[RMDB]
RNA sequence: GGGAACGACUCGAGUAGAGUCGAAAAGCAUGGUCAGCGUCGGUUCGACCUCAUGGCCGGUCAACGCCCGCAUGAUCAACGAGCGUUGCGGGUGGCUGUGCGCCUCCUCCGGGGUGAUCCGGCCUUCAUGGGACCCUCUUUUCGAAGAGGGUCCCAUAAAAGAAACAACAACAACAAC
Reactivity to 2A3 in 0.01 (KOAc 150mM, MgCl2 10mM, bicine 150mM(pH8.5), 24C), signal-to-noise 1, nucleotides 027 to 126: g080c020a150u070g070g020u070c010a000g020c110g090u080c070g040g150u080u080c020g120a090c000c030u060c020a070u000g000g000c000c000g010g000u080c110a110a000c110g020c000c030c000g000c000a040u110g000a110u300c190a070a180c140g130a060g000c110g060u040u090g000c020g000g000g040u000g070g000c030u010g090u070g040c160g020c000c020u030c030c000u010c030c220g010g010g000g010u090g010a020u060c020c070g010g000c000c010u060u090c020